An RNA of 170 nucleotides, treated with 2A3 and DMS and read out base by base. DMS (dimethyl sulfate) methylates the pairing face of unpaired adenines and cytosines. Reactivities are given for positions 27 through 129. The DMS profile rests on 29,036 reads.

RNA sequence: GGGAACGACUCGAGUAGAGUCGAAAAACUAAUGGUGGUUACAAUUCUUGGCAUUUAGUCGAGGGUGAACUAUUGGUGCAAGACUUACGCUUAAAUAAGCUCCUGCAUUGGUCUGAUCAAACCAUAUCAAGAAUCGUGUUCGCACGAUUCAAAAGAAACAACAACAACAAC
Reactivity to 2A3 in 0.01 (KOAc 150mM, MgCl2 10mM, bicine 150mM(pH8.5), 24C), signal-to-noise 9, nucleotides 027 to 129: a010c080u090a050a030u070g050g010u010g020g080u090u070a070c090a080a040u070u020c000u010u010g010g010c020a120u120u100u300a060g000u000c010g000a020g010g020g010u030g030a030a010c020u010a040u060u080g040g000u020g020c010a030a020g020a030c010u030u050a050c060g080c110u130u210a080a090a040u120a060a030g010c040u010c010c010u030g020c020a040u030u070g030g000u010c050u050g030a060u080c040a020a020a040c020c010a020u040a040u130c060a060a060
Reactivity to DMS in 0.01 (KOAc 150mM, MgCl2 10mM, bicine 150mM(pH8.5), 24C), signal-to-noise 6, nucleotides 027 to 129: a120c070u000a070a070u050g000g000u020g010g030u000u000a080c070a110a050u020u010c020u000u000g020g040c040a140u070u120u000a140g030u020c060g030a000g000g020g020u020g030a030a000c060u000a090u050u020g000g000u000g000c060a040a060g010a050c040u000u000a080c110g040c150u000u000a080a150a140u000a020a040g040c060u020c000c040u000g020c050a040u010u010g000g030u000c070u030g000a080u000c080a100a070a060c040c000a090u000a090u030c040a120a090